[RMDB]
RNA sequence: GGGAACGACUCGAGUAGAGUCGAAAAAGUCGAUUCGGCAAUAUCAAUCGGCUGCUGAGUCAGGCUGAGAAUGUGCGCCACAUCUGCGCCAUCCGCACGAUACGCGGUCAGCACGCCUUGAACGCGAGAUAUAUCGUCACUUCGGUGACGAUAUAUCAAAAGAAACAACAACAACAAC
Reactivity to DMS in 0.01 (KOAc 150mM, MgCl2 10mM, bicine 150mM(pH8.5), 24C), signal-to-noise 6, nucleotides 027 to 126: a030g020u010c010g010a040u000u000c040g030g010c060a060a110u000a150u010c130a080a080u000c110g010g030c080u000g030c030u000g010a040g010u000c030a090g010g000c020u000g000a080g020a080a060u000g020u010g010c020g010c030c150a100c160a060u010c130u000g000c020g010c050c030a050u010c060c020g000c070a060c160g000a090u020a080c110g010c040g010g000u000c020a060g030c050a110c080g010c050c030u000u010g010a050a050c110g010c060g000a170
Reactivity to 2A3 in 0.01 (KOAc 150mM, MgCl2 10mM, bicine 150mM(pH8.5), 24C), signal-to-noise 6, nucleotides 027 to 126: a000g030u020c010g010a030u040u020c030g030g020c050a060a080u060a070u290c080a160a070u150c060g080g000c030u020g000c010u020g010a010g020u040c080a090g030g000c020u050g020a020g060a100a080u110g050u090g040c020g020c040c030a110c030a170u050c060u080g000c010g010c040c000a050u020c030c010g030c020a030c090g080a040u090a160c080g000c010g000g010u010c010a010g010c020a030c080g010c010c020u040u080g060a080a010c060g020c020g060a030